[RMDB]
RNA sequence: GGGAACGACUCGAGUAGAGUCGAAAAUGAUAUUGAGAUCGGUGGUAUACCAUUUUCCACUUUUAAAACACCUACAAAUACUUUUAUUGAAAUGACAGAUGCUAUCUAUUCAGUUAUUGAACAAGGUAAGGCAUUAUCCUUUAGAGAUGCUGAUGUGCAUGACUGGGUGUUUCGACACCCAGUCAUGAAAAGAAACAACAACAACAAC
Reactivity to 2A3 in 0.01 (KOAc 150mM, MgCl2 10mM, bicine 150mM(pH8.5), 24C), signal-to-noise 1, nucleotides 027 to 156: u110g000a000u020a080u130u210g070a060g110a090u090c110g040g020u010g010g020u060a060u000a180c100c040a010u090u000u000u000c000c000a010c110u100u090u010u130a050a070a000a040c010a130c000c010u150a080c030a010a110a010u020a060c010u150u040u070u200a170u170u140g020a020a060a060u130g050a000c010a010g030a100u030g110c020u030a010u170c000u000a040u030u080c000a000g000u090u160a050u050u060g020a060a030c060a130a050g010g080u080a010a130g050g030c000a040u000u070a080u150c000c000u000u130u210a000g020a000g000a030u020g000c020u010g010a080u010g020u010g020

This 207-nucleotide RNA was probed chemically with 2A3. The 2A3 profile rests on 471 reads. The RNA was probed in 150 mM KOAc, 10 mM MgCl2 and 150 mM bicine (pH 8.5) at 24 C. The data come from the RNA Mapping Database (RMDB), library OK3TST.